The record gives the reactivity of an RNA of 170 nucleotides to DMS and 2A3. Source: RMDB library 15KLIB, as collected in RNAgym. 2A3 adducts were read by reverse transcription with SuperScript II with manganese. DMS (dimethyl sulfate) methylates the pairing face of unpaired adenines and cytosines.
[RMDB]
RNA sequence: GGGAACGACUCGAGUAGAGUCGAAAAACAGUAGCGAUUGUAAUGUCGUACGGUAUUCUUUGGACGGUAAUUUCAGAACAGAGGUUGAUCCCGACCUAUCUGCUUUCUAUGUUAAGGAUGGUAAAUAAAGCGAUCGGGUUCGCCCGAUCGAAAAGAAACAACAACAACAAC
Reactivity to DMS in 0.01 (KOAc 150mM, MgCl2 10mM, bicine 150mM(pH8.5), 24C), signal-to-noise 4, nucleotides 027 to 129: a150c050a090g040u030a090g030c110g010a040u040u000g020u070a100a070u070g020u030c060g030u020a060c060g000g070u050a000u000u010c000u040u010u000g050g030a090c070g030g000u020a040a120u030u020u020c060a090g000a000a000c120a090g030a060g000g000u000u040g000a100u010c050c000c000g050a030c120c030u050a070u020c080u040g040c110u020u000u010c030u070a150u040g040u100u000a050a160g010g020a040u000g020g020u030a070a110a020u070a040a080a130g010
Reactivity to 2A3 in 0.01 (KOAc 150mM, MgCl2 10mM, bicine 150mM(pH8.5), 24C), signal-to-noise 3, nucleotides 027 to 129: a020c000a020g040u070a010g040c040g030a040u030u140g110u200a050a040u120g010u020c020g000u000a050c040g010g010u090a080u070u020c000u050u090u050g040g000a040c000g010g040u080a040a110u080u150u100c070a030g000a130a080c000a040g000a060g020g000u010u000g010a080u000c040c010c000g000a000c000c000u000a050u040c050u040g000c000u000u120u000c060u060a130u180g120u200u090a080a030g080g030a050u100g030g030u040a050a130a130u150a040a050a020g020